[RMDB]
RNA sequence: GGGAACGACUCGAGUAGAGUCGAAAAGACAAUAGCGUAGGGAACCAAGGAAAGAGGUAAGAAAUCCCACGGUAGAAGGCUUGGUUCUAGCCGUGGGAAGAAGAAGUCCCACUCCCUACGCCGAUAAACAAGCUCAUACUUUCGAGUAUGAGCUUGUAAAAGAAACAACAACAACAAC
Reactivity to DMS in 0.01 (KOAc 150mM, MgCl2 10mM, bicine 150mM(pH8.5), 24C), signal-to-noise 2, nucleotides 027 to 126: g000a130c160a080a040u000a080g010c000g010u000a040g000g000g000a040a020c040c010a130a100g000g000a090a070a110g000a070g000g000u000a100a070g000a030a080a050u000c010c000c000a020c000g010g000u000a010g000a010a020g000g000c170u020u010g020g020u020u000c030u000a030g040c000c020g010u000g000g000g010a000a000g000a030a030g000a150a080g000u010c000c000c030a200c030u000c000c000c000u000a010c020g010c020c150g000a090u000a060a090
Reactivity to 2A3 in 0.01 (KOAc 150mM, MgCl2 10mM, bicine 150mM(pH8.5), 24C), signal-to-noise 1, nucleotides 027 to 126: g090a020c050a070a260u070a120g010c010g000u020a030g000g010g000a030a010c040c070a070a020g040g040a080a100a090g160a080g050g040u100a050a020g030a100a070a020u000c000c010c010a000c010g000g000u030a040g010a050a000g130g040c140u160u150g080g060u170u020c030u040a020g060c000c000g010u000g000g000g000a000a000g000a000a000g010a010a000g030u000c000c010c000a000c000u030c020c000c000u000a000c010g000c000c010g040a040u150a060a180